[RMDB]
RNA sequence: GGGAACGACUCGAGUAGAGUCGAAAAGCUGAGAAAUUCGUUUCUCAGCACUGGAAAUAAAGCCGAAAGGCUAGCCAUUCCUUAUUUGGCGAAAGCCAGGCAUGAGCCUCCACUUCGGUGGAGGCAACCAUUACGGAUCUUUCGAGAUCCGUAAUGGAAAAGAAACAACAACAACAAC
Reactivity to 2A3 in 0.01 (KOAc 150mM, MgCl2 10mM, bicine 150mM(pH8.5), 24C), signal-to-noise 4, nucleotides 027 to 126: g000c000u020g010a010g020a000a060a010u130u150c180g050u030u000u000c010u010c000a000g000c000a000c020u020g020g110a020a160a200u210a150a240a000g000c020c000g040a110a030a000g000g010c000u000a010g010c000c000a030u030u060c010c000u130u100a280u140u130u060g000g000c010g020a080a010a010g010c000c000a010g000g040c070a090u160g090a010g020c000c010u000c010c000a020c020u060u070c240g070g000u000g000g000a000g000g000c000a000a020
Reactivity to DMS in 0.01 (KOAc 150mM, MgCl2 10mM, bicine 150mM(pH8.5), 24C), signal-to-noise 3, nucleotides 027 to 126: g010c000u000g010a030g000a000a010a050u000u000c200g020u000u000u000c010u000c000a000g000c000a020c090u010g010g000a100a090a110u010a080a140a080g030c000c010g020a140a060a110g010g030c010u000a080g020c010c010a110u000u000c040c010u010u010a160u000u000u000g010g010c000g010a090a070a140g010c000c000a060g020g000c230a070u010g000a190g000c000c000u010c000c000a010c010u000u020c160g020g020u000g000g000a020g000g020c000a000a010